[RMDB]
RNA sequence: GGGAACGACUCGAGUAGAGUCGAAAAUAAAAUCGACCAGAUCAGGACGAAUCUGUACAAAGAUAAAGCCAGAAGGAAAUUGUCCACCCGGUAAGAGCUUGUCGUAGGCGUGGAGCACGGCUUGCACACAAUCUGCGUAGUUCGCUACGCAGAUUGUAAAAGAAACAACAACAACAAC
Reactivity to DMS in 0.01 (KOAc 150mM, MgCl2 10mM, bicine 150mM(pH8.5), 24C), signal-to-noise 2, nucleotides 027 to 126: u010a050a110a070a070u000c090g030a130c070c010a060g000a060u000c100a040g000g010a040c060g020a220a000u000c000u000g000u000a120c180a070a090a050g000a100u000a080a090a120g010c060c010a110g000a040a080g000g000a090a090a120u000u010g020u000c000c000a210c030c000c020g000g000u010a040a080g010a090g020c040u000u000g000u010c030g030u000a050g000g000c110g060u000g000g000a110g020c080a050c040g010g040c020u000u010g020c040a160c220
Reactivity to 2A3 in 0.01 (KOAc 150mM, MgCl2 10mM, bicine 150mM(pH8.5), 24C), signal-to-noise 1, nucleotides 027 to 126: u050a010a020a010a050u050c000g030a020c040c000a000g030a080u130c060a060g000g050a020c010g020a020a020u080c000u010g040u150a080c080a040a220a030g070a040u080a010a080a040g030c010c030a020g050a100a020g110g050a030a060a110u170u080g020u000c000c040a010c010c040c040g000g040u110a150a050g020a000g040c010u020u050g030u020c020g000u010a130g050g100c060g000u050g090g100a010g020c000a000c000g000g000c000u020u030g050c020a030c020